Structure probing data (2A3) for a 207-nucleotide construct. The reactions ran in a buffer of 150 mM KOAc, 10 mM MgCl2 and 150 mM bicine (pH 8.5), at 24 C.

[RMDB]
RNA sequence: GGGAACGACUCGAGUAGAGUCGAAAAGUUUUGGAACCGAAACCUCUGCUACAUCAUCAAAUUGCGGGGACAUCCUAAAGCUGGUGCUACUAAGCAGGUGCCGAAACGACUUGUGGCCGGGGUAAUGACCUGGGGUAUAGUAAAAACGCGCCAGAUGCAACGAGACCAAGUUCGCUUGGUCUCGUUGAAAAGAAACAACAACAACAAC
Reactivity to 2A3 in 0.01 (KOAc 150mM, MgCl2 10mM, bicine 150mM(pH8.5), 24C), signal-to-noise 1, nucleotides 027 to 156: g000u040u000u090u160g070g010a080a000c010c060g000a090a110a000c000c000u000c040u120g010c020u100a110c000a250u250c020a050u060c050a070a130a090u110u130g020c010g010g000g010g000a030c000a010u120c040c030u120a120a120a000g090c030u010g000g010u000g010c000u020a040c030u030a020a000g040c040a000g000g010u000g180c100c030g160a100a090a070c050g060a050c000u040u070g000u070g040g000c040c070g020g000g000g030u090a140a120u130g000a030c010c060u040g020g020g000g000u110a170u070a300g040u050a030a000a000a000a090c120g000c000g050c030c000a000g000a000u100g010

It was measured as part of the RMDB library RSTRND. For 2A3, 376 sequencing reads were counted.